The record gives the reactivity of an RNA of 177 nucleotides to DMS and 2A3. Conditions: 150 mM KOAc, 10 mM MgCl2 and 150 mM bicine (pH 8.5), 24 C. For 2A3, 24,040 sequencing reads were counted. For 2A3 the reverse transcriptase was SuperScript II with manganese. It was measured as part of the RMDB library RFMREP.
[RMDB]
RNA sequence: GGGAACGACUCGAGUAGAGUCGAAAAGCGUUGCUAUAGGACUUUCUAUUUUGUGCUGUAUUCUGAGGAGCACAAAAUAAAAAGCCCGAUAACAACGCAUAAACCUACAGGACUUCGGUCCUGUAGGCACAUACUUUAGGUUCGCCUAAAGUAUGUGAAAAGAAACAACAACAACAAC
Reactivity to DMS in 0.01 (KOAc 150mM, MgCl2 10mM, bicine 150mM(pH8.5), 24C), signal-to-noise 6, nucleotides 027 to 126: g010c000g010u000u000g010c020u000a010u000a100g010g010a020c000u000u000u000c030u000a010u000u000u000u000g010u000g000c000u000g020u010a160u000u010c290u020g000a170g020g010a030g000c000a000c000a000a000a000a000u000a000a010a010a010a010g020c010c000c000g020a020u000a010a010c000a010a000c000g000c010a040u000a030a070a190c000c000u000a000c000a010g000g000a010c000u000u010c240g020g000u000c000c000u000g010u000a000g000g010
Reactivity to 2A3 in 0.01 (KOAc 150mM, MgCl2 10mM, bicine 150mM(pH8.5), 24C), signal-to-noise 9, nucleotides 027 to 126: g010c000g000u000u010g010c010u010a010u020a040g000g000a020c000u000u000u000c010u010a010u010u010u010u010g020u010g000c010u020g100u290a240u250u190c140u210g230a180g090g090a000g040c000a000c000a010a000a000a000u010a000a010a000a000a000g000c000c000c000g000a000u010a010a000c000a000a000c000g000c000a000u040a010a020a000c010c000u000a000c000a000g000g000a000c000u030u200c280g090g000u000c000c000u000g000u000a000g000g000